[RMDB]
RNA sequence: GGGAACGACUCGAGUAGAGUCGAAAAAUGCUGCACCUGCAGAAGAGAGUCAAACAGAUCAGGCAACAGCGAUAUGCUUCUAUUUUGCAUGGCUUACGAGAUUUGCGGUCAAGAUGCCGUCCAUUGCGUGCCUCUGUCAUUUCGAUGACAGAGGCACAAAAGAAACAACAACAACAAC
Reactivity to 2A3 in 0.01 (KOAc 150mM, MgCl2 10mM, bicine 150mM(pH8.5), 24C), signal-to-noise 1, nucleotides 027 to 126: a010u060g000c010u020g000c000a050c050c000u060g020c030a000g000a070a000g070a000g000a000g090u050c070a050a050a110c030a030g110a050u120c000a010g010g060c050a100a020c030a110g000c040g030a060u020a010u270g020c000u050u010c010u030a180u050u170u080u020g000c000a050u120g020g010c020u030u120a020c030g030a050g010a260u070u000u180g040c070g000g060u020c050a090a000g070a100u120g000c020c010g030u010c030c030a080u010u060g010c060
Reactivity to DMS in 0.01 (KOAc 150mM, MgCl2 10mM, bicine 150mM(pH8.5), 24C), signal-to-noise 1, nucleotides 027 to 126: a000u000g030c000u000g010c170a130c080c110u060g000c060a040g010a110a080g020a080g020a030g000u000c030a020a100a090c160a030g000a010u050c050a030g020g000c010a130a060c130a070g010c010g010a050u020a000u000g000c040u010u010c100u000a100u000u000u000u000g010c050a090u010g010g010c010u020u000a180c130g010a060g000a130u000u000u010g000c030g020g010u010c070a070a100g020a080u000g000c000c000g020u000c020c020a070u010u040g000c300